Annotation:
Structure probing data (DMS and 2A3) for a 177-nucleotide construct. The RNA was probed in 150 mM KOAc, 10 mM MgCl2 and 150 mM bicine (pH 8.5) at 24 C. The DMS profile rests on 4,643 reads. The data come from the RNA Mapping Database (RMDB), library TTRDES. 2A3 adducts were read by reverse transcription with SuperScript II with manganese.
RNA sequence: GGGAACGACUCGAGUAGAGUCGAAAAGAUAUGGACCGAAGAAGGGAGCUGGAGUCGGAAACGACUCACAGCAUCGAUCUUCCGGUCCUAAGUCAAAAGUUCUAUGGCUGUUCGCAGCCAUAGAACAGAUUUAUUUCUCGUUCGCGAGAAAUAAAUCAAAAGAAACAACAACAACAAC
Reactivity to DMS in 0.01 (KOAc 150mM, MgCl2 10mM, bicine 150mM(pH8.5), 24C), signal-to-noise 3, nucleotides 027 to 126: g010a050u000a260u010g000g000a000c010c000g000a120a080g010a020a070g030g030g010a120g040c000u010g000g000a030g020u000c010g020g000a040a050a080c000g000a020c000u000c000a040c010a000g000c000a140u000c120g010a170u000c000u010u010c070c050g010g000u000c000c000u000a010a070g000u010c030a100a140a170a090g000u000u000c000u000a010u000g000g020c000u000g000u000u020c240g030c010a010g010c000c000a000u000a010g010a000a000c010a060
Reactivity to 2A3 in 0.01 (KOAc 150mM, MgCl2 10mM, bicine 150mM(pH8.5), 24C), signal-to-noise 3, nucleotides 027 to 126: g000a000u030a010u070g000g000a000c000c020g010a090a040g020a030a030g270g200g120a140g000c010u000g000g000a010g000u000c010g020g000a040a020a020c000g000a000c000u000c030a300c000a040g000c000a090u300c020g080a070u030c000u030u000c110c030g010g000u000c010c000u000a010a020g010u010c020a030a000a090a190g000u000u010c000u000a000u010g000g000c010u010g020u100u160c300g020c160a000g000c010c000a000u000a000g010a000a000c000a010